[RMDB]
RNA sequence: GGGAACGACUCGAGUAGAGUCGAAAAGAUAUGGAGCCACUACGAGCUCCAUAAUAUUAUUGGUUACAUCGGAAACGAUGUAACCAAUAAUAUUAUGAAGAGCGAUGAGUAGAAGGCUCCUAAGUCACUUAGGGUAAAGCUUCGGCUUUACCCUAAGAAAAGAAACAACAACAACAAC
Reactivity to DMS in 0.01 (KOAc 150mM, MgCl2 10mM, bicine 150mM(pH8.5), 24C), signal-to-noise 2, nucleotides 027 to 126: g010a030u020a300u010g000g000a020g000c000c000a300c010u000a000c000g000a260g040c000u010c000c000a000u000a020a000u000a000u000u000a000u000u000g000g010u000u000a010c000a010u000c000g010g000a160a170a200c000g020a030u010g010u000a010a010c010c000a000a000u010a000a000u000a000u000u000a000u000g000a130a160g000a010g030c020g010a200u000g020a300g010u000a020g010a080a160g040g020c010u010c000c000u000a000a070g030u010c070a260
Annotation:
Conditions: 150 mM KOAc, 10 mM MgCl2 and 150 mM bicine (pH 8.5), 24 C. Structure probing data (DMS) for a 177-nucleotide construct.